Chemical mapping of a 177-nucleotide RNA with DMS and 2A3.
[RMDB]
RNA sequence: GGGAACGACUCGAGUAGAGUCGAAAAGAAAAUCCGUCGGAACGCGUACGGGGUCCGUCCGAGUCCACCCCGGUGGCCGGAUGCAUGGACCCGCGCAGGGUCGUCGGACAGGAGGAUCUGGCAUGAACGUAAGCACUUUCUUCGGAAAGUGCUUACGAAAAGAAACAACAACAACAAC
Reactivity to DMS in 0.01 (KOAc 150mM, MgCl2 10mM, bicine 150mM(pH8.5), 24C), signal-to-noise 1, nucleotides 027 to 126: g040a140a110a100a070u000c000c000g000u020c010g000g050a180a000c000g010c030g000u000a110c200g000g010g000g010u000c000c010g000u000c000c000g000a060g000u050c000c000a020c010c040c270c300g000g000u000g000g020c010c020g000g010a000u000g020c290a120u040g000g000a040c010c010c000g020c030g050c020a050g020g000g040u060c000g010u000c000g010g000a000c040a100g010g000a080g000g000a150u000c040u000g000g000c090a110u000g000a140a180
Reactivity to 2A3 in 0.01 (KOAc 150mM, MgCl2 10mM, bicine 150mM(pH8.5), 24C), signal-to-noise 2, nucleotides 027 to 126: g100a010a070a000a000u000c000c000g020u050c030g030g000a030a010c060g060c000g000u030a130c150g110g000g000g000u000c010c000g010u010c000c000g020a080g060u080c000c000a010c000c000c020c080g090g000u000g000g000c000c000g010g000a000u040g050c050a160u150g000g000a000c000c000c000g000c000g020c000a050g040g010g040u070c030g020u000c020g030g020a000c030a120g070g020a020g040g010a060u050c060u180g000g030c080a090u090g070a070a030
For 2A3, 1,251 sequencing reads were counted.
The data come from the RNA Mapping Database (RMDB), library RFM100.